[RMDB]
RNA sequence: GGGAACGACUCGAGUAGAGUCGAAAAGGAUCACCUGAUCUCAGGAGUUCGAGACCAGCCUGGCCAGCAUAGCAAAACCCCAACUCUACCAAAAAUACAAAAAUUAGCUGGGCGUGGUGGCACAUGCUUGUAACCCUAGCUACUUGGGAGGCUGAGACCUCAUCAUUAGGUUCGCCUAAUGAUGAGGAAAAGAAACAACAACAACAAC
Reactivity to 2A3 in 0.01 (KOAc 150mM, MgCl2 10mM, bicine 150mM(pH8.5), 24C), signal-to-noise 3, nucleotides 027 to 156: g040g030a060u080c030a100c060c030u070g090a130u090c060u020c050a040g000g020a050g070u030u030c080g020a070g030a070c020c030a010g020c010c020u080g050g020c000c040a010g000c030a090u110a050g050c040a010a040a100a110c010c000c000c010a000a060c020u020c000u160a070c040c040a040a080a040a080a030u170a060c090a020a090a040a040a090u120u020a040g000c010u030g010g010g000c030g020u020g000g090u060g030g000c020a030c010a120u100g000c000u010u060g030u080a040a050c000c000c010u040a030g030c050u040a070c010u040u040g000g010g010a040g000g000c020u000g010a020g010a080
Reactivity to DMS in 0.01 (KOAc 150mM, MgCl2 10mM, bicine 150mM(pH8.5), 24C), signal-to-noise 1, nucleotides 027 to 156: g000g000a110u000c030a050c020c000u000g000a050u000c030u000c010a080g020g010a150g020u020u000c090g000a080g010a050c010c020a080g050c000c020u020g020g010c000c000a110g000c070a080u000a080g070c050a040a030a090a100c030c010c000c050a050a120c050u000c110u000a070c020c050a010a050a030a060a110u000a130c030a020a050a050a050a200u010u000a030g050c020u010g020g020g030c030g000u000g040g020u000g020g000c010a110c040a080u000g000c020u000u070g010u000a100a110c040c000c000u000a050g000c030u000a050c080u000u000g020g000g000a080g040g030c020u030g030a110g010a190